[RMDB]
The record gives the reactivity of an RNA of 177 nucleotides to DMS.
Values cover nucleotides 27 to 126.
The reactions ran in a buffer of 150 mM KOAc, 10 mM MgCl2 and 150 mM bicine (pH 8.5), at 24 C.
RNA sequence: GGGAACGACUCGAGUAGAGUCGAAAAUAAAAGAGCGUACGACUCACAAAGACUGUACGACAGUCUGACUCUCUCGUACGCUUGUUCAACGAGAGAGAGAGUGGGUUGGAACAAGUGUGAAAAAAAAGUUAUCCAUUUCCUUCGGGAAAUGGAUAACAAAAGAAACAACAACAACAAC
Reactivity to DMS in 0.01 (KOAc 150mM, MgCl2 10mM, bicine 150mM(pH8.5), 24C), signal-to-noise 1, nucleotides 027 to 126: u000a060a100a200a090g010a070g050c060g010u000a190c010g010a030c010u010c000a010c060a130a110a070g000a000c000u000g040u010a140c150g030a140c000a020g030u020c000u000g030a190c010u010c000u010c000u000c030g000u010a070c090g000c130u000u040g010u000u000c030a060a050c020g000a050g000a010g000a010g000a050g000a090g060u000g030g000g010u000u000g000g000a040a020c060a130a100g010u000g020u030g000a000a000a000a210a040a000a060a300